Background: Chemical mapping of a 177-nucleotide RNA with DMS and 2A3. For 2A3, 173,753 sequencing reads were counted. It was measured as part of the RMDB library OK1LIB. The DMS profile rests on 102,045 reads. The reactions ran in a buffer of 150 mM KOAc, 10 mM MgCl2 and 150 mM bicine (pH 8.5), at 24 C.
[RMDB]
RNA sequence: GGGAACGACUCGAGUAGAGUCGAAAAGGUAGCCAGCGCACGAUGAGACUGCCGUGACGUCUAGCCUGCGUCUCAACUAGUCUCCAUCAAUCAAAACGCUGGGAUUGAUGUACGAGACUAGUACACAGUGAUUGCACUUGUUCGCAGGUGUAAUCACAAAAGAAACAACAACAACAAC
Reactivity to DMS in 0.01 (KOAc 150mM, MgCl2 10mM, bicine 150mM(pH8.5), 24C), signal-to-noise 9, nucleotides 027 to 126: g000g010u010a050g010c020c020a030g010c020g010c070a070c090g000a110u020g000a120g010a080c030u010g010c040c040g010u010g000a060c040g010u010c030u010a130g000c030c010u010g000c040g010u000c010u010c090a120a040c000u000a000g000u000c000u000c010c010a000u000c000a000a010u000c020a070a070a090a120c130g010c080u010g000g000g010a000u000u000g010a000u000g010u070a110c230g000a020g010a010c000u000a000g000u000a060c210a100c220a090
Reactivity to 2A3 in 0.01 (KOAc 150mM, MgCl2 10mM, bicine 150mM(pH8.5), 24C), signal-to-noise 9, nucleotides 027 to 126: g040g000u020a010g020c010c010a010g000c010g010c020a050c080g050a040u100g010a020g050a060c020u030g020c020c010g040u050g010a030c010g010u020c040u060a020g020c000c010u010g010c010g020u000c020u010c040a020a020c000u000a000g000u000c000u000c010c000a000u000c000a000a000u000c010a010a050a060a090c080g030c090u100g030g010g000a000u000u000g000a000u000g020u080a070c100g000a000g000a000c000u000a000g010u050a020c110a000c010a040